[RMDB]
RNA sequence: GGGAACGACUCGAGUAGAGUCGAAAAUGACCAUCAGGCGCACGCGCUCCUGCCAAAGCGGCAGCUCGUCGAGGGCGGCGGGCAGCGCCUGCGGUAAACGGAGGGCCAUCAUGCGUGAAGCCUCAUGAUAAUCCCAUUAUUUCGAUAAUGGGAUUAUAAAAGAAACAACAACAACAAC
Reactivity to 2A3 in 0.01 (KOAc 150mM, MgCl2 10mM, bicine 150mM(pH8.5), 24C), signal-to-noise 9, nucleotides 027 to 126: u140g060a030c020c000a030u080c030a010g020g000c010g000c020a010c020g040c010g010c010u010c010c000u040g030c010c000a070a100a040g050c040g060g020c020a030g030c020u030c040g040u020c010g030a190g090g210g150c050g010g000c010g000g010g000c020a030g040c010g020c030c000u010g000c010g000g010u070a120a100a030c050g010g020a020g020g050g100c070c010a130u170c040a050u220g020c030g020u020g020a090a020g020c000c000u030c010a040u070g050
Reactivity to DMS in 0.01 (KOAc 150mM, MgCl2 10mM, bicine 150mM(pH8.5), 24C), signal-to-noise 9, nucleotides 027 to 126: u030g010a180c070c020a070u030c120a040g000g010c010g010c010a030c110g010c020g010c010u010c010c010u020g000c010c010a040a300a120g000c050g010g000c020a090g020c060u010c040g010u010c020g000a270g020g010g010c120g020g000c010g000g000g020c050a070g000c040g010c020c030u000g010c260g010g000u020a020a080a100c160g010g000a040g000g010g010c070c100a070u020c110a090u030g010c040g010u010g000a080a130g000c010c010u010c130a070u020g000